[RMDB]
RNA sequence: GGGAACGACUCGAGUAGAGUCGAAAAGAUCAAAGCUAUAUGCAUUAGUACCUCUAUGUUCUGGAGUAAUCAAAGAUCCGCUUAGACGAGCCUAUAUGGAAGAGCUAGAACAUAUGUGCUACAUGCUGCAGUGUUAUCACUUCGGUGAUAACACUGCAAAAGAAACAACAACAACAAC
Reactivity to 2A3 in 0.01 (KOAc 150mM, MgCl2 10mM, bicine 150mM(pH8.5), 24C), signal-to-noise 4, nucleotides 027 to 126: g070a020u130c090a050a030a050g070c070u140a030u070a050u300g000c000a000u000u000a000g020u010a000c000c010u000c000u000a010u000g000u000u000c000u000g010g010a070g130u200a210a040u110c060a010a060a000g020a120u010c080c020g000c090u150u150a040g000a000c000g000a000g010c000c000u140a140u050a060u300g020g010a040a050g080a040g210c030u020a020g010a000a000c000a010u000a010u110g000u000g000c000u000a000c010a000u000g010c000u000